An RNA of 177 nucleotides, treated with 2A3 and DMS and read out base by base. For 2A3, 5,193 sequencing reads were counted. DMS adducts were read by reverse transcription with MarathonRT. It was measured as part of the RMDB library OK1LIB.
RNA sequence: GGGAACGACUCGAGUAGAGUCGAAAACAUUGACAGCGCCAACCUGCCUACGCUGCGCAUGAUUGAACUGGCGAAUGAAAACCACAAGCUGCUGACCUCCGUGCAUGACGACUGGGAUGCUUACUGGUAUCUGGGAUGAUUUCGAUCAUCCCAGAUAAAAAGAAACAACAACAACAAC
Reactivity to 2A3 in 0.01 (KOAc 150mM, MgCl2 10mM, bicine 150mM(pH8.5), 24C), signal-to-noise 6, nucleotides 027 to 126: c050a060u080u170g070a040c030a040g030c010g030c030c020a060a050c010c030u040g010c000c010u040a040c050g020c060u070g000c040g030c040a040u090g080a120u100u120g060a090a040c020u050g010g010c020g020a030a050u120g040a100a050a000a030c020c020a040c010a110a020g010c000u030g000c020u030g060a090c000c000u000c010c010g010u020g020c040a020u110g010a030c030g030a040c050u030g010g020g030a010u070g010c010u040u050a080c020u090g060g020
Reactivity to DMS in 0.01 (KOAc 150mM, MgCl2 10mM, bicine 150mM(pH8.5), 24C), signal-to-noise 4, nucleotides 027 to 126: c100a120u030u010g030a130c080a080g000c010g010c050c030a080a100c070c040u000g030c030c010u010a070c070g000c040u000g020c020g030c020a040u030g020a120u020u010g010a110a100c080u010g000g020c030g000a080a070u010g000a100a050a130a170c040c040a040c110a050a070g000c030u000g000c050u000g000a090c020c000u000c020c000g000u030g000c050a030u010g020a040c110g000a120c050u010g000g000g000a060u010g010c050u010u010a090c070u000g000g010